[RMDB]
RNA sequence: GGGAACGACUCGAGUAGAGUCGAAAAGAAAUGCACGGCGCGUGUGUACCCCCCCUAAAGUUGUUCCUAAAGCGAGGAUAUGGAGGAGUGGCGGGUGCCGGGGGACCGGGGUGAUCUCUGGCACGCGAUUUAAACUACCCUUCGGGGUAGUUUAAAUAAAAGAAACAACAACAACAAC
Reactivity to DMS in 0.01 (KOAc 150mM, MgCl2 10mM, bicine 150mM(pH8.5), 24C), signal-to-noise 4, nucleotides 027 to 126: g010a090a090a110u020g010c020a050c030g010g000c070g000c030g010u000g000u010g000u010a080c020c000c010c000c010c000c020u010a080a090a080g000u000u000g010u010u010c030c000u000a080a120a140g000c080g000a060g000g020a090u020a070u020g000g000a100g020g010a080g000u010g010g030c050g000g020g040u000g010c070c040g000g000g000g000g010a070c070c060g010g000g000g010u020g010a070u020c030u000c020u020g000g020c020a030c050g000c070g010
Reactivity to 2A3 in 0.01 (KOAc 150mM, MgCl2 10mM, bicine 150mM(pH8.5), 24C), signal-to-noise 2, nucleotides 027 to 126: g030a000a060a020u140g000c020a000c050g050g040c030g020c000g050u050g000u040g050u140a160c000c010c000c010c010c010c010u070a040a070a020g010u050u010g000u020u080c010c000u030a080a100a050g050c050g060a070g050g000a090u030a110u210g060g020a050g020g020a050g010u070g030g040c060g040g020g050u030g040c010c010g000g000g010g010g020a010c030c050g000g000g000g070u080g090a120u070c040u020c030u070g050g000c030a010c030g040c020g000